[RMDB]
RNA sequence: GGGAACGACUCGAGUAGAGUCGAAAAGGCGACAAGUUCGCUUGUCGCCACGGGGUCCAGCCUGGAAAGGCUGGAGGUAUUGGAAUGGUGGGGCCGCCAUUCAACGCGGGACAUUCGUGUCCCGCAACCCUUAACAGUAGUUCGCUACUGUUAAGGGAAAAGAAACAACAACAACAAC
Reactivity to DMS in 0.01 (KOAc 150mM, MgCl2 10mM, bicine 150mM(pH8.5), 24C), signal-to-noise 6, nucleotides 027 to 126: g000g010c000g010a010c000a010a010g010u000u020c220g020c010u000u000g000u000c000g020c000c000a010c130g000g010g000g010u000c010c000a010g000c000c000u010g010g040a120a130a020g010g010c000u010g010g000a010g010g000u010a090u010u010g010g010a030a020u000g000g010u010g000g000g000g000c060c090g000c010c000a010u000u000c010a100a100c200g000c000g010g000g010a020c000a040u000u010c190g010u000g010u000c000c000c000g010c000a010a020
Reactivity to 2A3 in 0.01 (KOAc 150mM, MgCl2 10mM, bicine 150mM(pH8.5), 24C), signal-to-noise 9, nucleotides 027 to 126: g000g010c000g000a000c010a010a010g010u030u070c150g060c130u000u000g000u010c000g000c000c000a000c020g010g000g000g010u010c000c000a000g000c000c000u070g100g120a190a100a020g000g000c000u000g010g040a000g010g010u150a150u130u300g110g010a010a010u010g000g000u020g020g020g020g010c010c000g000c000c000a000u010u010c010a020a030c090g000c000g000g000g000a000c010a010u030u050c210g080u040g000u020c000c000c000g000c000a000a000